Chemical mapping of a 207-nucleotide RNA with DMS and 2A3. For 2A3, 3,704 sequencing reads were counted. The reactions ran in a buffer of 150 mM KOAc, 10 mM MgCl2 and 150 mM bicine (pH 8.5), at 24 C. For DMS, 6,336 sequencing reads were counted.
[RMDB]
RNA sequence: GGGAACGACUCGAGUAGAGUCGAAAAAGCGUUGCCUUUCCAUCCAUCUCGCAAAACGACGAUCUCUUGGUGCAACUGAACAACGGCGUCUUGUACAAGACUCGAGCGACUCGCGUCUACACCAAUUUCCAUACGCACAAGAAUCGCAUGGUUUACGUAGUAUUAGUCCUUUCGAGGACUAAUACUAAAAAGAAACAACAACAACAAC
Reactivity to DMS in 0.01 (KOAc 150mM, MgCl2 10mM, bicine 150mM(pH8.5), 24C), signal-to-noise 3, nucleotides 027 to 156: a120g020c050g030u000u010g010c000c130u000u000u010c030c020a150u000c070c050a080u010c040u000c040g000c010a050a050a080a100c040g010a070c020g010a110u000c060u010c030u000u010g020g020u000g020c000a100a160c130u000g000a080a020c010a110a120c100g000g010c050g030u000c030u000u000g010u000a090c060a070a100g020a030c000u010c050g000a150g000c060g020a100c090u010c020g030c090g000u010c040u010a110c030a080c040c020a020a140u000u000u000c020c020a100u000a070c060g000c070a170c030a050a100g010a080a090u000c010g020c010a070u000g000g010u000u000u010a070c060g010
Reactivity to 2A3 in 0.01 (KOAc 150mM, MgCl2 10mM, bicine 150mM(pH8.5), 24C), signal-to-noise 5, nucleotides 027 to 156: a000g110c090g050u070u080g030c000c000u070u040u010c040c040a060u050c040c020a100u050c040u050c070g070c080a070a080a050a060c070g120a020c030g000a040u020c020u020c020u130u050g110g010u050g050c030a080a040c080u090g090a090a020c040a050a030c110g050g010c030g060u040c010u040u070g070u080a060c070a150a000g010a020c040u010c080g030a030g050c070g130a130c060u020c020g000c010g020u000c020u040a020c040a020c080c030a040a030u040u060u000c020c020a040u050a140c070g000c000a010c010a090a040g010a070a060u040c020g000c040a030u070g080g000u060u060u070a050c060g020